[RMDB]
RNA sequence: GGGAACGACUCGAGUAGAGUCGAAAAUGCAUUGAAUUUGUAGAUUGCUUUUGGCAUUAUGGUCAUUUUCACAAUAUUGAUUCUACCCAUCCGUGAGCAUGGGAUGUGUUUCCAUUUGUUCGUGUCAUCUAUGAUUUCUUUCGGCAGUGAUUUGUAGCAAGUAUCGUCCAUUCGUGGACGAUACUUGAAAAGAAACAACAACAACAAC
Reactivity to 2A3 in 0.01 (KOAc 150mM, MgCl2 10mM, bicine 150mM(pH8.5), 24C), signal-to-noise 4, nucleotides 027 to 156: u080g000c010a000u040u050g040a070a050u050u040u050g050u020a030g020a100u030u080g030c010u070u100u120u230g040g000c040a080u140u080a040u170g080g020u060c060a070u060u070u140u080c050a040c030a110a000u060a110u220u180g060a070u100u050c020u110a080c020c010c000a010u000c020c060g150u100g090a010g010c080a020u030g020g000g020a010u050g070u000g000u040u060u000c020c000a040u010u080u090g050u060u110c070g000u010g060u050c020a030u000c030u020a040u040g060a090u050u060u010c000u000u070u020c050g050g000c030a050g020u030g130a150u050u080u130g050u050a020g030
Reactivity to DMS in 0.01 (KOAc 150mM, MgCl2 10mM, bicine 150mM(pH8.5), 24C), signal-to-noise 2, nucleotides 027 to 156: u000g020c020a090u010u000g000a040a110u000u010u000g030u000a090g010a100u000u010g030c010u020u000u010u000g020g010c060a120u000u010a090u000g030g030u010c040a050u000u000u000u000c050a100c070a090a130u000a170u000u010g010a090u010u000c030u000a090c030c000c000a080u010c060c030g050u000g000a080g050c110a080u010g000g030g020a040u000g040u000g020u000u000u020c020c010a160u000u000u000g020u000u000c070g030u000g020u010c060a090u000c050u030a020u000g000a150u000u000u000c000u000u000u000c090g070g030c020a090g020u000g000a100u000u000u000g050u010a100g000